Background: The record gives the reactivity of an RNA of 115 nucleotides to 2A3 and DMS.

[RMDB]
RNA sequence: GGGAACGACUCGAGUAGAGUCGAAAAGAAAAAUGUAUAAGAAUUUCUAAAAACGGUUUUUCUACACAAGAAAUAAACAUGUUGUUCGCGAUAUGAAAAGAAACAACAACAACAAC
Reactivity to 2A3 in 0.01 (KOAc 150mM, MgCl2 10mM, bicine 150mM(pH8.5), 24C), signal-to-noise 4, nucleotides 027 to 095: g040a000a040a000a000a000u140g040u080a110u070a140a030g040a080a070u060u110u020c050u100a080a060a020a030a040c020g020g010u010u000u000u000u020c020u060a040c060a010c000a050a070g090a080a090a010u200a040a070a010c030a010u020g000u010u010g010u020u010c050g000c010g050a030u030a010u050g130a070
Reactivity to DMS in 0.01 (KOAc 150mM, MgCl2 10mM, bicine 150mM(pH8.5), 24C), signal-to-noise 8, nucleotides 027 to 095: g010a010a050a040a080a070u010g000u020a060u010a110a080g010a100a100u010u010u010c030u010a050a050a070a090a070c100g010g010u000u000u000u000u000c010u010a070c110a050c180a070a060g010a040a040a050u030a040a070a070c130a060u000g000u000u010g010u000u000c040g000c160g000a040u010a040u010g010a040
The data come from the RNA Mapping Database (RMDB), library P50LIB. The RNA was probed in 150 mM KOAc, 10 mM MgCl2 and 150 mM bicine (pH 8.5) at 24 C.